This 177-nucleotide RNA was probed chemically with DMS and 2A3. For DMS, 717 sequencing reads were counted.

[RMDB]
RNA sequence: GGGAACGACUCGAGUAGAGUCGAAAAAUAUUCAAGCACAGCACACACACACUUCUCAGGACAGCUGUCGUGAGUGUUCCAUGCUCAUUUCCUUCUGGAUACAUCAGCAACUCACUCUGCUAUGAUCGUCGUACAGACUGUUCGCAGUCUGUACGACAAAAGAAACAACAACAACAAC
Reactivity to DMS in 0.01 (KOAc 150mM, MgCl2 10mM, bicine 150mM(pH8.5), 24C), signal-to-noise 1, nucleotides 027 to 126: a090u000a020u000u000c060a090a100g020c030a020c080a020g030c080a080c050a070c080a050c080a030c000a010c000u020u000c100u000c030a120g020g000a100c200a050g010c050u000g020u000c070g000u000g000a050g020u000g000u000u000c100c090a070u000g000c010u000c030a100u010u000u000c010c040u000u010c150u010g010g000a130u000a080c050a050u000c090a010g000c080a040a100c030u020c080a050c130u030c030u000g020c070u000a040u050g020a070u010c130
Reactivity to 2A3 in 0.01 (KOAc 150mM, MgCl2 10mM, bicine 150mM(pH8.5), 24C), signal-to-noise 1, nucleotides 027 to 126: a030u180a120u060u120c040a090a010g030c020a030c020a050g000c010a000c020a000c000a000c000a000c040a000c090u090u030c050u030c090a050g070g130a040c020a020g060c090u010g080u080c050g050u100g000a050g040u040g060u120u030c030c010a000u060g000c010u000c010a000u030u040u050c030c000u060u260c070u100g000g000a000u040a160c010a040u070c000a000g030c000a040a000c000u000c040a030c040u000c030u040g090c040u030a090u080g090a140u040c060

The RNA was probed in 150 mM KOAc, 10 mM MgCl2 and 150 mM bicine (pH 8.5) at 24 C. For 2A3, 1,080 sequencing reads were counted. For 2A3 the reverse transcriptase was SuperScript II with manganese. The data come from the RNA Mapping Database (RMDB), library OK2TST.